[RMDB]
RNA sequence: GGGAACGACUCGAGUAGAGUCGAAAAUGGUUUCGACGCGGGUACGGACGCGCAGUGGGGCAUGCCGAGCUUAGUGUGCUCGUAAAACUGACUAAAACAAACUAACUGCAAACGACGAACGUUUCGCACUCGCUGCUUAAUAACCAGUGAGCCCUACGUACCGGAGUAAGUUCGCUUACUCCGGUACAAAAGAAACAACAACAACAAC
Reactivity to DMS in 0.01 (KOAc 150mM, MgCl2 10mM, bicine 150mM(pH8.5), 24C), signal-to-noise 1, nucleotides 027 to 156: u000g010g020u000u010u000c020g050a100c060g000c010g000g010g030u010a080c070g010g000a060c000g040c060g030c120a080g040u010g010g000g040g000c050a040u010g020c150c020g010a050g020c050u000u000a020g010u050g010u000g050c010u000c010g010u000a040a030a040a160c130u000g000a210c130u010a060a130a100a120c020a040a080a200c100u000a030a120c040u000g000c080a050a040a110c070g000a090c100g040a120a020c070g010u000u000u010c020g050c030a070c040u010c000g030c000u000g000c010u000u000a100a090u010a130a080c160c010a040g010u030g000a100g080c010c020c000u000a130c140
Reactivity to 2A3 in 0.01 (KOAc 150mM, MgCl2 10mM, bicine 150mM(pH8.5), 24C), signal-to-noise 2, nucleotides 027 to 156: u030g030g000u000u040u080c140g010a050c040g050c020g000g000g010u010a050c060g000g040a010c000g050c010g000c020a030g000u010g020g020g040g000c010a010u080g030c020c000g050a060g000c020u050u090a050g010u060g130u150g050c010u000c010g050u050a000a000a020a040c030u040g050a010c020u040a080a060a050a000c100a040a090a000c010u060a050a050c030u050g070c030a110a020a070c030g090a000c060g070a130a010c030g030u030u020u040c040g000c000a020c000u010c020g000c000u000g010c000u070u110a110a020u060a050a030c010c000a010g010u020g030a020g000c020c000c000u030a030c050
Structure probing data (DMS and 2A3) for a 207-nucleotide construct. The DMS profile rests on 1,521 reads. 2A3 is a SHAPE reagent: it acylates the 2'-hydroxyl of flexible nucleotides of all four kinds. Source: RMDB library ARCHII, as collected in RNAgym. 2A3 adducts were read by reverse transcription with SuperScript II with manganese. The RNA was probed in 150 mM KOAc, 10 mM MgCl2 and 150 mM bicine (pH 8.5) at 24 C.